[RMDB]
RNA sequence: GGGAACGACUCGAGUAGAGUCGAAAAGAUCACCUGUUCGCAGGUGAUCAAUCUCCCACUUGAUCGAAGUCUCACAGCCUGGUUGCCCACGAGGCACGGGCGUAUUGAUCCGCUUCGGCGGAUCAAAACGUCGCUAAGUAUUCGUACUUAGCGACGUAAAAGAAACAACAACAACAAC
Reactivity to DMS in 0.01 (KOAc 150mM, MgCl2 10mM, bicine 150mM(pH8.5), 24C), signal-to-noise 3, nucleotides 027 to 126: g010a020u000c000a000c000c000u000g020u000u030c200g020c020a020g010g010u000g000a000u000c000a020a060u010c180u000c000c000c000a110c100u010u010g000a090u010c050g000a120a180g000u010c050u000c080a200c190a110g020c000c010u000g020g000u000u010g020c010c010c000a130c300g020a180g010g020c010a030c010g000g010g010c010g010u010a010u000u000g010a010u000c000c000g010c010u000u010c160g020g040c010g000g000a010u010c000a000a010a100
Reactivity to 2A3 in 0.01 (KOAc 150mM, MgCl2 10mM, bicine 150mM(pH8.5), 24C), signal-to-noise 2, nucleotides 027 to 126: g020a010u000c000a010c000c000u010g010u000u060c270g010c130a000g000g010u020g000a000u000c000a000a000u000c000u000c000c000c000a030c030u090u210g060a130u090c100g110a100a010g170u040c010u040c100a090c070a030g020c000c000u210g210g010u220u090g050c020c010c000a130c140g010a270g000g000c000a010c010g010g000g000c000g000u000a010u000u030g000a020u010c000c000g010c030u060u080c200g090g000c010g040g010a010u000c000a000a000a010
Conditions: 150 mM KOAc, 10 mM MgCl2 and 150 mM bicine (pH 8.5), 24 C. Structure probing data (DMS and 2A3) for a 177-nucleotide construct. 2A3 is a SHAPE reagent: it acylates the 2'-hydroxyl of flexible nucleotides of all four kinds. The DMS profile rests on 2,645 reads. The 2A3 profile rests on 2,082 reads.